[RMDB]
RNA sequence: GGGAACGACUCGAGUAGAGUCGAAAAGCCAUGAACAAGAUGUCGAUCUGGUGUUAUCGAAUGAAUGGCGAGCGAAUAUAUUCCAUCAACAACAAAUCGAUUGUCAAACAUAUAGCGUUUUACCGCGCCAAUGCUCCCGAUUCGUCGGGAGCAUUGGAAAAGAAACAACAACAACAAC
Reactivity to 2A3 in 0.01 (KOAc 150mM, MgCl2 10mM, bicine 150mM(pH8.5), 24C), signal-to-noise 1, nucleotides 027 to 126: g020c010c020a120u170g080a040a050c100a090a080g040a030u080g030u090c010g000a000u000c010u030g040g050u060g020u090u040a040u070c060g040a040a080u100g050a140a080u010g120g030c040g040a070g070c060g200a290a000u110a000u010a030u230u000c030c000a030u080c050a020a040c000a010a010c020a010a040a020u040c040g040a030u060u180g040u080c030a160a050a000c070a070u190a010u060a160g000c000g000u000u000u040u230a070c050c010g020c000g000
Reactivity to DMS in 0.01 (KOAc 150mM, MgCl2 10mM, bicine 150mM(pH8.5), 24C), signal-to-noise 2, nucleotides 027 to 126: g020c020c020a120u050g000a140a100c150a130a150g000a080u000g000u030c000g000a030u000c050u000g020g000u000g000u010u000a160u030c190g000a080a010u000g030a190a160u000g010g010c080g000a130g000c040g000a070a020u000a170u000a260u000u000c000c050a020u000c120a010a080c020a020a040c010a000a010a030u000c050g010a040u000u020g050u010c050a060a110a060c140a050u000a160u000a090g010c020g010u020u010u030u050a160c120c070g010c040g020